Description
This 207-nucleotide RNA was probed chemically with DMS and 2A3. The RNA was probed in 150 mM KOAc, 10 mM MgCl2 and 150 mM bicine (pH 8.5) at 24 C. The data come from the RNA Mapping Database (RMDB), library M2RFPK.
RNA sequence: GGGAACGACUCGAGUAGAGUCGAAAAGCAGUAACUCGUUAGGCGAGGCUCCUAUACAAACACAGGUUGCUGAUCUGACGACGUCGAGAGACGCCCAAGAUUAGGACAGGAUAUAUCGAACCAAGGUGAACCUGUCCAGGGUUCGCCCUGGACAGAAGACACCUAUGUUGUUCGCAACAUAGGUGUCAAAAGAAACAACAACAACAAC
Reactivity to DMS in 0.01 (KOAc 150mM, MgCl2 10mM, bicine 150mM(pH8.5), 24C), signal-to-noise 1, nucleotides 027 to 156: g010c050a150g090u020a080a220c040u000c070g030u000u010a120g010g000c000g000a130g030g000c020u000c020c000u000a070u000a190c050a060a120a090c210a270c030a130g040g000u000u010g020c020u000g000a030u020c000u010g020a130c010g010a060c000g000u000c000g040a300g000a300g050a010c030g000c020c020c060a170a070g030a040u010u010a100g020g000a070c050a100g010g040a100u020a030u000a110u020c020g000a030a070c020c010a030a000g000g000u000g010a020a030c110c000u000g000u000c060c000a060g000g030g050u000u000c300g020c050c000c010u030g000g000a000c010a000g040a040a170
Reactivity to 2A3 in 0.01 (KOAc 150mM, MgCl2 10mM, bicine 150mM(pH8.5), 24C), signal-to-noise 3, nucleotides 027 to 156: g050c030a010g040u100a060a050c020u030c060g050u070u150a080g010g040c030g010a040g060g000c020u000c020c030u140a130u100a190c130a060a190a010c150a000c040a110g120g000u030u140g040c000u010g010a020u040c010u050g010a020c010g000a010c020g010u000c020g020a020g000a020g010a100c010g000c000c010c000a000a020g030a030u060u060a010g010g040a010c050a080g020g070a020u050a010u010a010u240c100g050a040a030c020c030a090a000g110g000u030g030a050a070c000c000u010g000u000c000c000a000g030g010g000u010u070c190g070c010c000c000u010g000g020a000c000a000g010a010a000